[RMDB]
RNA sequence: GGGAACGACUCGAGUAGAGUCGAAAACGCUCAAGACGCUGGCCUAUGAGUUGUGAUUUCUGCCUUUUCCCCUUCCUCCUUGGGCUAAGCCAGACCAGAAAGGGCCCCGUGCGCAACGUGCUUCACAAUCUCUCAGGGAAAGCGGCUAACGUGGCGAGUUUUACCCAUUAUUCGUAAUGGGUAAAACAAAAGAAACAACAACAACAAC
Reactivity to DMS in 0.01 (KOAc 150mM, MgCl2 10mM, bicine 150mM(pH8.5), 24C), signal-to-noise 1, nucleotides 027 to 156: c040g020c000u000c070a100a050g010a030c020g020c050u000g020g040c020c030u000a160u010g030a100g050u000u000g010u000g000a130u010u010u000c060u010g010c000c040u000u020u020u000c040c000c010c040u000u010c030c000u000c010c000u000u020g000g010g020c040u000a040a250g030c030c030a110g010a040c010c040a110g030a100a020a080g000g040g000c000c020c000c030g040u000g010c030g040c030a070a080c000g030u010g030c090u000u040c000a040c070a030a070u010c010u000c020u010c040a140g020g000g000a070a080a050g020c060g040g020c010u000a040a070c050g010u010g000g030c040g010a210
Reactivity to 2A3 in 0.01 (KOAc 150mM, MgCl2 10mM, bicine 150mM(pH8.5), 24C), signal-to-noise 3, nucleotides 027 to 156: c020g000c000u020c020a040a000g060a030c010g010c020u000g040g060c010c000u100a160u130g020a000g000u040u030g000u010g040a130u050u130u150c110u080g010c010c000u050u040u050u040c000c010c000c020u040u140c000c030u070c060c000u090u100g030g000g010c030u040a040a000g030c020c020a020g030a060c020c020a030g060a030a060a010g000g000g020c000c010c020c000g070u120g030c070g000c050a040a060c020g020u040g020c020u020u040c000a030c020a060a160u070c020u000c000u050c140a040g010g010g040a050a080a010g030c020g000g040c030u070a050a030c080g020u080g010g000c020g000a020
An RNA of 207 nucleotides, treated with DMS and 2A3 and read out base by base.
It was measured as part of the RMDB library OK3TST.
The RNA was probed in 150 mM KOAc, 10 mM MgCl2 and 150 mM bicine (pH 8.5) at 24 C.